Source information
Structure probing data (2A3 and DMS) for a 177-nucleotide construct. The DMS profile rests on 4,746 reads. The data come from the RNA Mapping Database (RMDB), library TTRDES. For 2A3, 7,925 sequencing reads were counted.
RNA sequence: GGGAACGACUCGAGUAGAGUCGAAAAAAAAGAUAUGGAAUCGGAGGCCUUGGAUUUAUACAGCUGACAUAUCGGAAACGAUAUGGAAAAGAGCUGUAUUGUCAGGCUGACGAUUCCUAAGUCAAAACAUUUAAACGAAGUUCGCUUCGUUUAAAUGAAAAGAAACAACAACAACAAC
Reactivity to 2A3 in 0.01 (KOAc 150mM, MgCl2 10mM, bicine 150mM(pH8.5), 24C), signal-to-noise 3, nucleotides 027 to 126: a000a000a000a040g070a030u120a050u140g000g000a010a010u000c020g020g010a020g040g000c040c040u170u300g220g010a030u200u300u020a030u030a020c010a000g000c000u030g100a040c000a000u000a000u020c000g010g020a030a030a010c010g000a020u010a000u030g060g140a110a250a080a040g300a020g000c000u010g000u010a000u000u000g000u010c000a000g010g000c000u000g000a000c000g000a000u000u040c000c000u000a030a000g030u000c020a000a060a070a090
Reactivity to DMS in 0.01 (KOAc 150mM, MgCl2 10mM, bicine 150mM(pH8.5), 24C), signal-to-noise 4, nucleotides 027 to 126: a090a030a110a100g010a040u010a300u000g010g010a030a010u000c000g010g000a300g010g010c000c000u000u010g020g000a020u000u010u000a010u000a000c000a010g020c000u000g020a170c000a010u000a000u000c000g020g000a150a090a210c010g010a020u000a000u010g000g010a070a090a070a160g010a040g010c000u000g020u000a000u010u010g010u000c000a030g010g010c000u000g000a270c000g020a000u000u000c010c000u010a020a080g010u010c030a100a070a110a170